[RMDB]
Description
The data come from the RNA Mapping Database (RMDB), library OK1LIB. Structure probing data (2A3) for a 177-nucleotide construct. The RNA was probed in 150 mM KOAc, 10 mM MgCl2 and 150 mM bicine (pH 8.5) at 24 C.

RNA sequence: GGGAACGACUCGAGUAGAGUCGAAAAUGUGCUUUAUUCCAGCUACUUUUGAAAUUAUCGGAAUGAUAGUUUUAGCACCAAAAUUACUAGGCGUUUCUAUAUUGGAAGCAGCAGUCAUGGGUGCAGUGAGUGGGUGGAUCUUCGGAUCCACCCACUCAAAAGAAACAACAACAACAAC
Reactivity to 2A3 in 0.01 (KOAc 150mM, MgCl2 10mM, bicine 150mM(pH8.5), 24C), signal-to-noise 1, nucleotides 027 to 126: u230g010u000g000c000u050u030u040a060u000u220c020c040a000g060c000u000a080c000u130u230u030u190g060a000a000a010u100u010a000u000c000g280g020a190a210u220g000a000u000a000g030u020u000u000u250a000g070c000a000c000c000a040a040a040a040u160u120a150c000u000a260g260g230c050g000u000u000u000c050u020a150u130a110u150u300g050g000a000a000g090c110a010g000c010a000g090u000c000a000u000g000g000g000u030g040c000a000g030u000